[RMDB]
An RNA of 177 nucleotides, treated with DMS and 2A3 and read out base by base. Conditions: 150 mM KOAc, 10 mM MgCl2 and 150 mM bicine (pH 8.5), 24 C. DMS adducts were read by reverse transcription with MarathonRT. Reactivities are rounded to 0.1 and cut off at 0 and 3. The data come from the RNA Mapping Database (RMDB), library TTRDES.
RNA sequence: GGGAACGACUCGAGUAGAGUCGAAAAGAUAUGGAGUGAGGGAGAAGGACUUGGAUUUACCUUCGGAAACGAAGGUUGUCAGUCCCUCCUCACUCCUAAGUCAAACGGCGGUCUUCGGACCGCCGAAGCACUAUCUUAUGUUCGCAUAAGAUAGUGCAAAAGAAACAACAACAACAAC
Reactivity to DMS in 0.01 (KOAc 150mM, MgCl2 10mM, bicine 150mM(pH8.5), 24C), signal-to-noise 3, nucleotides 027 to 126: g020a030u010a300u000g010g010a020g010u000g000a020g000g010g020a070g020a150a120g030g010a020c000u000u010g010g010a040u010u010u010a010c010c000u000u000c000g010g000a120a110a200c000g000a020a000g000g020u010u010g000u000c010a050g000u000c010c020c020u000c000c000u000c000a010c000u000c000c000u000a000a050g000u000c020a100a150a300c040g010g000c000g000g010u000c000u000u010c210g010g000a000c000c000g000c000c000g000a000a020
Reactivity to 2A3 in 0.01 (KOAc 150mM, MgCl2 10mM, bicine 150mM(pH8.5), 24C), signal-to-noise 4, nucleotides 027 to 126: g030a040u110a040u170g010g000a010g000u020g010a060g090g250g040a170g060a280a270g030g000a020c050u170u230g200g030a080u270u290u300a050c000c010u010u000c010g010g000a040a030a020c010g010a000a000g000g000u000u010g010u000c000a000g000u000c010c020c000u010c000c000u000c000a000c000u000c000c000u000a020a000g000u010c010a020a040a070c020g010g000c020g000g020u000c020u100u120c300g120g020a000c000c000g000c010c000g010a010a000